[RMDB]
RNA sequence: GGGAACGACUCGAGUAGAGUCGAAAAGAUAUGGACCGUGAGUUUCAACAGCUACACAUCGGAAACGAUGUAAGUAGACAUGAAAGUCACGGUCCUAAGUCAAAAGUGCUGGGCUUCGGCCCAGCACCGAUGUGUGAAUGUUCGCAUUCACACAUCGAAAAGAAACAACAACAACAAC
Reactivity to 2A3 in 0.01 (KOAc 150mM, MgCl2 10mM, bicine 150mM(pH8.5), 24C), signal-to-noise 2, nucleotides 027 to 126: g000a000u010a000u080g000g000a000c020c010g000u020g030a190g250u010u040u050c290a300a230c110a110g000c000u010a000c000a000c000a010u010c000g010g030a000a040a010c000g000a010u010g020u030a100a120g000u000a010g040a090c150a300u300g010a000a000a020g170u000c000a000c000g000g000u000c000c000u000a010a000g000u010c000a000a010a030a080g010u010g010c010u000g000g000g000c030u090u170c300g100g000c000c000c000a000g000c000a000c010
Reactivity to DMS in 0.01 (KOAc 150mM, MgCl2 10mM, bicine 150mM(pH8.5), 24C), signal-to-noise 4, nucleotides 027 to 126: g010a010u010a290u020g000g000a010c000c000g030u000g000a020g000u000u000u000c000a090a110c210a280g000c000u010a010c000a180c000a010u010c010g000g000a090a070a120c000g010a010u000g010u010a050a120g030u000a010g000a030c100a300u000g010a010a010a020g000u000c000a010c000g010g010u000c000c000u000a000a030g010u000c030a110a070a120a140g010u000g020c010u000g000g000g020c000u000u010c280g030g000c000c000c000a000g000c000a000c010